RNA sequence: GGGAACGACUCGAGUAGAGUCGAAAAGAUAUGGAUGCCGCAGGGAGCCCAGUAGAACGAAAUCACACUCGGAAACGAGUGAAUGAUUUCGUUCUACUGGGCAUCGAUCUGCGGGCAUCCUAAGUCACUCACUUAUCUACUUCGGUAGAUAAGUGAGAAAAGAAACAACAACAACAAC
Reactivity to DMS in 0.01 (KOAc 150mM, MgCl2 10mM, bicine 150mM(pH8.5), 24C), signal-to-noise 2, nucleotides 027 to 126: g010a070u010a300u010g000g010a010u000g010c020c000g000c010a030g010g000g020a040g070c010c000c000a010g020u000a000g010a010a010c000g010a010a000a010u000c000a120c010a010c000u010c000g010g000a120a180a250c000g000a020g010u000g000a090a100u000g000a010u000u000u000c000g010u000u000c010u000a010c000u000g010g000g040c000a000u000c080g000a060u030c010u000g000c000g030g010g020c000a010u000c000c000u020a020a120g010u000c070a290
About this RNA
Chemical mapping of a 177-nucleotide RNA with DMS. The data come from the RNA Mapping Database (RMDB), library TTRINS. The reactions ran in a buffer of 150 mM KOAc, 10 mM MgCl2 and 150 mM bicine (pH 8.5), at 24 C.